[RMDB]
RNA sequence: GGGAACGACUCGAGUAGAGUCGAAAAGCCAUGAGCACGAAGUAGGCCAUGAACGUGCCGAGCAUGAGGAUAUCGCCGUGGGCAAAGUUGAUGAGUUUUAUGAUCCCGUAGAUCAUGGUGUAGCCGAACGUCGUUGAAUAUUCGUAUUCAACGACGUAAAAGAAACAACAACAACAAC
Reactivity to 2A3 in 0.01 (KOAc 150mM, MgCl2 10mM, bicine 150mM(pH8.5), 24C), signal-to-noise 1, nucleotides 027 to 126: g000c020c010a020u070g070a040g050c010a000c060g030a070a010g030u080a050g000g060c000c020a030u070g050a030a010c010g040u090g010c020c030g020a010g020c000a030u080g010a100g130g010a030u090a070u230c050g070c070c030g120u130g070g000g000c050a110a100a000g030u000u040g050a060u040g030a050g060u050u040u090u120a090u080g080a110u070c010c010c000g010u040a080g030a120u010c010a010u050g000g060u040g020u040a010g060c000c030g000a020
Reactivity to DMS in 0.01 (KOAc 150mM, MgCl2 10mM, bicine 150mM(pH8.5), 24C), signal-to-noise 6, nucleotides 027 to 126: g000c010c000a040u010g020a070g020c030a060c030g010a070a190g010u000a050g020g000c030c020a040u000g010a040a080c050g010u000g010c020c030g010a130g020c050a070u000g010a090g000g020a150u010a070u000c100g010c060c070g030u000g020g000g030c020a060a050a100g020u000u000g010a050u010g000a100g010u000u000u000u000a060u000g010a080u000c080c070c040g010u000a060g000a070u000c020a020u000g020g010u000g000u000a130g010c010c040g000a110